[RMDB]
RNA sequence: GGGAACGACUCGAGUAGAGUCGAAAAGAUAUGGACCGAUGAGACAUGCUCCGGUCGGAAACGACGAGCAACAGCUCAGCGGUCCUAAGUCAAAAGCCAUUCUUUAUGUUCGCAUAAAGAAUGGCAACACAGAGCAGCUGUUCGCAGCUGCUCUGUGAAAAGAAACAACAACAACAAC
Reactivity to DMS in 0.01 (KOAc 150mM, MgCl2 10mM, bicine 150mM(pH8.5), 24C), signal-to-noise 2, nucleotides 027 to 126: g000a030u000a300u000g010g030a000c010c010g030a040u000g030a040g000a060c090a260u000g010c010u000c080c170g040g040u000c000g010g000a060a040a120c000g030a040c000g000a040g000c050a020a050c300a160g000c010u000c000a010g020c020g040g010u000c000c010u000a010a070g010u030c050a080a100a090a090g000c000c000a010u000u000c000u000u000u000a000u000g010u000u000c180g010c000a000u000a000a000a030g000a010a000u000g020g040c020a010a010
Reactivity to 2A3 in 0.01 (KOAc 150mM, MgCl2 10mM, bicine 150mM(pH8.5), 24C), signal-to-noise 2, nucleotides 027 to 126: g030a020u050a050u140g010g000a000c000c000g000a000u020g000a000g050a070c110a160u060g010c000u030c130c210g300g150u020c010g000g000a060a070a010c000g000a000c010g030a010g030c020a010a170c100a120g020c000u000c010a000g000c020g000g000u000c000c000u000a010a010g020u000c020a000a040a060a100g000c020c000a000u000u020c000u000u020u000a020u030g080u020u120c300g010c190a000u000a020a000a010g000a020a000u000g000g000c000a020a000
An RNA of 177 nucleotides, treated with DMS and 2A3 and read out base by base. Values are in units of 0.01, from 0 to 300, in steps of 10. Source: RMDB library TTRDEL, as collected in RNAgym. 2A3 adducts were read by reverse transcription with SuperScript II with manganese.